Notes
An RNA of 177 nucleotides, treated with 2A3 and DMS and read out base by base. 2A3 is a SHAPE reagent: it acylates the 2'-hydroxyl of flexible nucleotides of all four kinds.
RNA sequence: GGGAACGACUCGAGUAGAGUCGAAAAAAAGGUCCGCAAAGACAUCCAGGAAUGGAAACCCUCGACGGGGUGGUAUGACUGGCAGCAGGUUCCAUUCUGUUCAAACCAUUUCACGGAACUGAUCAUGGUGGAUGUGUCUUUUCGAAGACACAUCCACAAAAGAAACAACAACAACAAC
Reactivity to 2A3 in 0.01 (KOAc 150mM, MgCl2 10mM, bicine 150mM(pH8.5), 24C), signal-to-noise 2, nucleotides 027 to 126: a010a020a000g150g030u050c040c000g030c020a060a030a070g000a030c010a020u030c030c020a020g000g000a040a000u010g020g010a040a170a130c040c020c030u090c070g040a080c070g000g010g010g000u030g080g000u090a150u150g190a090c020u000g060g100c000a010g060c000a000g040g000u090u000c010c000a010u020u000c000u060g020u030u030c000a030a110a040c000c000a050u000u000u090c090a110c070g070g000a120a140c090u090g030a090u110c040a160u110g110
Reactivity to DMS in 0.01 (KOAc 150mM, MgCl2 10mM, bicine 150mM(pH8.5), 24C), signal-to-noise 1, nucleotides 027 to 126: a210a130a060g010g000u000c000c000g070c150a070a120a200g000a040c100a060u030c040c000a090g000g020a050a000u000g000g010a060a080a130c040c000c010u000c140g010a050c020g000g010g000g040u000g010g000u040a030u010g040a070c080u000g000g010c140a070g000c000a100g030g000u000u000c000c000a070u050u000c010u000g000u000u000c260a040a040a060c000c050a060u040u000u010c110a080c050g000g040a060a020c070u000g010a080u070c060a170u010g020
For DMS the reverse transcriptase was MarathonRT. Source: RMDB library OK1LIB, as collected in RNAgym. The RNA was probed in 150 mM KOAc, 10 mM MgCl2 and 150 mM bicine (pH 8.5) at 24 C.